This 177-nucleotide RNA was probed chemically with DMS and 2A3. The reactions ran in a buffer of 150 mM KOAc, 10 mM MgCl2 and 150 mM bicine (pH 8.5), at 24 C. 2A3 adducts were read by reverse transcription with SuperScript II with manganese.
RNA sequence: GGGAACGACUCGAGUAGAGUCGAAAAGCCAUCGUAAGCGCUAUUGGGGGAAAAGAAAAUCUUGAAGCUGCAACGCAUUGUGUAACACGAUUACGUUUAGUGCUUAAAGAUGAAAGCAAAGUUGAUACCGUACCUAAGGGUUCGCCCUUAGGUACGGAAAAGAAACAACAACAACAAC
Reactivity to DMS in 0.01 (KOAc 150mM, MgCl2 10mM, bicine 150mM(pH8.5), 24C), signal-to-noise 2, nucleotides 027 to 126: g020c070c000a060u050c080g040u020a040a060g000c040g000c020u000a050u020u040g080g000g000g000g040a110a000a080a110g000a170a080a150a010u010c000u000u000g010a110a010g000c000u000g060c130a060a000c010g020c300a010u010u000g030u000g000u040a160a140c190a000c010g010a020u000u030a170c130g020u030u020u020a090g010u000g010c000u000u000a170a020a040g000a070u000g000a110a040a060g050c130a030a040a100g000u000u010g000a070u000a050
Reactivity to 2A3 in 0.01 (KOAc 150mM, MgCl2 10mM, bicine 150mM(pH8.5), 24C), signal-to-noise 2, nucleotides 027 to 126: g000c000c030a010u040c020g070u090a050a070g070c000g020c050u060a060u120u160g000g000g050g050g040a000a110a000a000g100a060a130a010a040u040c030u000u050g010a080a030g060c030u080g090c050a040a000c010g000c050a040u060u060g040u000g090u200a150a040c050a000c080g020a030u070u190a000c010g010u020u000u060a040g050u030g000c000u000u040a010a000a000g040a030u090g010a060a040a010g040c090a100a100a030g020u010u030g040a070u020a090